The record gives the reactivity of an RNA of 207 nucleotides to 2A3. Reactivities are given for positions 27 through 156.
[RMDB]
RNA sequence: GGGAACGACUCGAGUAGAGUCGAAAAUUCCCCAGCCAGGGAUUUUCGUCCUCUAUCUUCUUGAGUUUCUUCUUUGUCUUCCGGAGGUCUCUCUCGAGUUCCUCUAACUUCUUUCUUCCGGCCACCCACUGCUCGAGGAUCUCUUCUCUCCCUCCGCGAUGAAGUAUAUGUUCGCAUAUACUUCAUCAAAAGAAACAACAACAACAAC
Reactivity to 2A3 in 0.01 (KOAc 150mM, MgCl2 10mM, bicine 150mM(pH8.5), 24C), signal-to-noise 2, nucleotides 027 to 156: u040u080c000c000c000c010a020g120c030c020a020g010g010g020a010u010u030u020u010c000g010u100c030c010u000c000u020a090u060c050u180u020c030u080u140g020a030g060u100u080u020c030u130u020c030u100u140u140g090u050c060u140u050c070c050g080g000a050g060g030u030c020u000c010u000c030u080c170g030a000g020u070u100c010c000u000c020u020a050a050c030u090u120c020u070u090u020c000u100u040c050c020g020g020c010c030a040c020c020c010a060c050u050g020c010u020c040g020a030g040g030a160u010c030u020c000u130u000c020u010c000u030c000c000c000u030c010c000g020c020